The record gives the reactivity of an RNA of 207 nucleotides to 2A3.
Values cover nucleotides 27 to 156.
The 2A3 profile rests on 513 reads.
The RNA was probed in 150 mM KOAc, 10 mM MgCl2 and 150 mM bicine (pH 8.5) at 24 C.
For 2A3 the reverse transcriptase was SuperScript II with manganese.
RNA sequence: GGGAACGACUCGAGUAGAGUCGAAAAACUGCCAUACGUGGCACAAACACGCCUUACCAGGACUAAACAGCGUGUCUAAAAAACAGUCCUUCAUACCUGAUCUGGAGGGUAGAUCAGGAAUACUAAAAAAAUCGGGUGAAGUUCGCUUCACCCGAAAGCCUUUACGAUGGUUCGCCAUCGUAAAGGCAAAAGAAACAACAACAACAAC
Reactivity to 2A3 in 0.01 (KOAc 150mM, MgCl2 10mM, bicine 150mM(pH8.5), 24C), signal-to-noise 1, nucleotides 027 to 156: a000c030u070g000c010c000a040u050a110c160g040u000g000g080c000a000c020a090a120a000c000a000c000g000c010c000u030u040a040c060c000a000g000g010a000c000u050a160a000a000c000a000g010c000g000u000g040u010c100u090a000a030a030a000a000a000c040a010g000u000c050c000u010u070c110a150u180a120c000c000u000g000a000u030c000u000g080g040a040g000g090g070u010a010g000a000u000c030a000g010g200a000a000u150a060c050u130a030a000a000a040a050a000a090u000c000g010g000g000u010g020a000a000g030u050u120c160g130c100u000u000c000a000c050c000c000g000a000a000a000